[RMDB]
RNA sequence: GGGAACGACUCGAGUAGAGUCGAAAACAUUACCAAAUGCCGCUCUCUGAUUCACUAUCCCUGACAUAGGAAAUGGGGAAGUUGACCUAGGUCUGGACAAAGAAGGGCCGUUGGGAGUGUUAGUCUGGGUAUCUUGCGAUGAUACAGGGAGGAGUGGCACAGUAGCAGUAUUCGUACUGCUACUGUGAAAAGAAACAACAACAACAAC
Reactivity to 2A3 in 0.01 (KOAc 150mM, MgCl2 10mM, bicine 150mM(pH8.5), 24C), signal-to-noise 3, nucleotides 027 to 156: c020a050u110u200a070c020c020a010a040a090u100g030c030c000g070c040u010c000u010c020u040g070a150u140u070c050a040c050u070a140u110c010c000c020u050g040a040c030a050u130a070g050g100a070a130a090u160g020g000g000g030a020a030g040u090u120g080a100c000c010u020a050g070g000u020c010u020g060g000a070c070a080a130a010g050a020a040g050g030g010c010c030g050u080u060g010g010g000a000g020u030g010u010u040a050g010u000c050u070g090g000g000u000a030u030c040u030u140g100c120g080a090u090g010a010u050a120c020a040g000g030g010a060g000g010a060g040u050g030g000
Reactivity to DMS in 0.01 (KOAc 150mM, MgCl2 10mM, bicine 150mM(pH8.5), 24C), signal-to-noise 3, nucleotides 027 to 156: c050a060u010u010a230c050c010a060a030a150u000g010c060c030g030c010u010c020u010c030u010g010a250u000u000c040a080c010u010a190u000c030c000c050u020g000a300c080a130u000a070g010g010a060a030a130u020g010g000g000g000a040a080g000u000u010g000a090c060c050u000a060g020g020u000c000u010g030g030a300c030a030a060a150g020a190a170g020g050g030c000c020g020u010u000g010g010g000a060g020u000g020u000u000a040g020u000c030u010g010g000g020u010a030u000c040u000u020g010c080g010a090u000g020a110u000a060c050a090g000g020g020a080g010g000a050g010u010g020g000
The record gives the reactivity of an RNA of 207 nucleotides to 2A3 and DMS. Source: RMDB library OK3TST, as collected in RNAgym. Conditions: 150 mM KOAc, 10 mM MgCl2 and 150 mM bicine (pH 8.5), 24 C. 2A3 adducts were read by reverse transcription with SuperScript II with manganese. Reactivities are given for positions 27 through 156.